[RMDB]
RNA sequence: GGGAACGACUCGAGUAGAGUCGAAAAUAAGCUGGAGCCCAGCAAGAUUACAAAGUUUGAGAAUGCUUUCUUGUCUCAUGUCGUCAGCCAGCACCAAGCCUUGUUGGGCACUAUCAGGUAUGAAUGCCCGAUAAUUAUGCUUCGGCAUAAUUAUCGGAAAAGAAACAACAACAACAAC
Reactivity to 2A3 in 0.01 (KOAc 150mM, MgCl2 10mM, bicine 150mM(pH8.5), 24C), signal-to-noise 2, nucleotides 027 to 126: u070a000a000g060c020u010g000g060a000g020c030c000c020a010g000c020a000a040g010a030u180u210a070c050a060a110a060g050u060u070u040g100a100g050a190a000u070g010c000u030u060u010c060u040u090g120u000c010u020c090a100u150g120u150c100g000u000c020a020g010c000c000a000g000c010a000c000c040a010a010g020c010c000u040u000g000u020u020g000g010g040c010a020c000u080a130u070c050a020g120g030u160a040u130g060a250a030u050g070c000
Reactivity to DMS in 0.01 (KOAc 150mM, MgCl2 10mM, bicine 150mM(pH8.5), 24C), signal-to-noise 2, nucleotides 027 to 126: u000a110a150g000c010u010g010g000a110g010c010c020c000a040g000c010a030a030g000a220u030u010a140c190a070a160a100g010u000u000u010g000a110g010a080a080u000g010c040u000u000u000c030u000u010g010u000c010u000c130a050u000g000u000c130g000u000c050a020g000c040c010a030g030c030a060c040c060a060a080g000c070c000u000u010g000u000u000g010g000g020c000a050c070u020a070u000c100a050g010g000u010a060u000g000a070a050u010g010c110